RNA sequence: GGGAACGACUCGAGUAGAGUCGAAAAAUAGUGUUAUUCGUAACACUAUAUAUCCGAACUCAAGGAUUCGUUCGAGAGACAUGCAUGCUAGCAUGAAAGCAACUGAACAAGCGUUCGCGCUUGUUAAGGUUAGGGCAGUAUUCGUACUGCCCUAACCAAAAGAAACAACAACAACAAC
Reactivity to DMS in 0.01 (KOAc 150mM, MgCl2 10mM, bicine 150mM(pH8.5), 24C), signal-to-noise 2, nucleotides 027 to 126: a000u000a010g000u010g010u000u000a010u000u000c190g010u000a000a000c000a000c000u010a000u000a030u000a110u000c140c010g030a090a070c020u000c020a130a190g020g000a010u000u000c020g030u000u000c010g000a190g020a210g030a120c000a020u000g000c010a140u000g010c230u020a070g020c000a020u000g000a040a140a140g010c190a040a070c140u000g050a050a040c010a000a000g000c000g010u020u010c290g050c000g000c000u030u000g020u000u000a030a050
Reactivity to 2A3 in 0.01 (KOAc 150mM, MgCl2 10mM, bicine 150mM(pH8.5), 24C), signal-to-noise 2, nucleotides 027 to 126: a000u000a000g000u010g000u030u010a010u040u060c230g020u040a010a000c000a000c000u000a000u010a000u010a000u000c030c010g010a160a060c000u010c030a020a050g090g010a050u040u010c030g030u010u000c040g070a040g000a000g040a300c010a000u010g010c010a010u170g180c040u100a030g000c020a040u030g010a030a010a020g100c040a060a090c070u100g060a020a000c030a000a000g010c000g020u060u100c200g000c000g020c080u000u000g000u050u050a070a030